[RMDB]
RNA sequence: GGGAACGACUCGAGUAGAGUCGAAAAGCGGGGCUUGAAACGCGGGUAGCGCGCACGCCCGGCGAAGAAGUUCGCAUACGCGGUGUGCUGGUGCCGAAGUGUCUGCUGCAACGGUACGCUCGACACCUAGAACAUACCGUAUUCGUACGGUAUGUAACGUAUUACUAGAGUUCGCUCUAGUAAUACGAAAAGAAACAACAACAACAAC
Reactivity to DMS in 0.01 (KOAc 150mM, MgCl2 10mM, bicine 150mM(pH8.5), 24C), signal-to-noise 4, nucleotides 027 to 156: g020c050g000g010g020g030c040u000u010g000a090a110a060c040g010c030g000g030g030u010a110g020c030g020c050g040c030a080c070g010c010c000c010g000g020c000g010a030a140g010a130a140g010u000u000c030g010c030a110u000a290c030g010c100g070g000u000g000u000g000c000u000g030g010u010g010c010c010g020a090a110g020u000g010u000c050u000g020c050u010g020c090a130a140c110g010g000u010a030c040g020c030u010c010g010a070c030a050c020c010u000a150g010a120a060c000a010u000a010c000c000g030u000a030u000u010c290g020u000a010c000g000g010u000a000u000g020u000a010a100
Reactivity to 2A3 in 0.01 (KOAc 150mM, MgCl2 10mM, bicine 150mM(pH8.5), 24C), signal-to-noise 8, nucleotides 027 to 156: g030c040g000g020g020g010c030u070u100g060a090a090a030c070g010c030g020g020g040u100a050g050c030g000c000g000c040a000c010g010c000c010c000g000g000c020g000a020a010g060a060a020g150u040u020c010g000c030a040u090a260c070g030c130g030g000u010g000u010g020c020u080g030g050u020g010c010c020g020a110a030g020u020g030u050c050u070g040c030u070g010c040a070a030c030g060g020u090a020c030g010c020u020c020g020a030c010a030c020c010u040a050g040a100a000c000a000u000a000c000c000g000u010a010u020u070c210g050u010a010c000g000g000u000a000u000g010u010a040a000